[RMDB]
Structure probing data (2A3 and DMS) for a 177-nucleotide construct.
For 2A3 the reverse transcriptase was SuperScript II with manganese.
For 2A3, 8,320 sequencing reads were counted.
The DMS profile rests on 6,302 reads.
RNA sequence: GGGAACGACUCGAGUAGAGUCGAAAAAUGCUGGUAUAGGGUGUACUUCGGAUUUCCGAGCCUAUAUUGGUUUUGAAAGGACCUUUAAGUCCCUACUAUACUACAUUGUACUAGCGUAGGCCACGUACCAGUAUAAUACGUUCGCGUAUUAUACUGGAAAAGAAACAACAACAACAAC
Reactivity to 2A3 in 0.01 (KOAc 150mM, MgCl2 10mM, bicine 150mM(pH8.5), 24C), signal-to-noise 5, nucleotides 027 to 126: a000u040g000c040u020g010g000u020a020u020a030g060g020g020u030g060u100a080c050u040u060c040g090g040a140u150u090u010c000c000g010a030g030c000c000u090a100u020a040u150u100g000g000u010u070u050u040g070a060a030a030g060g050a080c010c000u070u140u110a050a000g020u010c010c000c000u030a090c010u040a030u010a050c020u000a020c010a090u050u120g040u040a040c040u030a030g030c010g070u030a030g030g080c030c020a040c030g020u020a100
Reactivity to DMS in 0.01 (KOAc 150mM, MgCl2 10mM, bicine 150mM(pH8.5), 24C), signal-to-noise 6, nucleotides 027 to 126: a020u000g010c100u000g010g020u000a010u000a030g010g000g020u010g020u010a070c130u000u000c240g000g010a300u000u000u000c010c030g010a040g000c010c010u000a070u000a080u010u010g010g010u000u000u000u010g010a040a080a110g000g000a090c020c050u010u010u020a080a130g000u000c010c020c030u010a170c040u000a070u000a020c030u000a040c070a050u000u000g010u000a060c090u000a060g020c040g000u000a060g010g010c040c040a080c150g010u010a150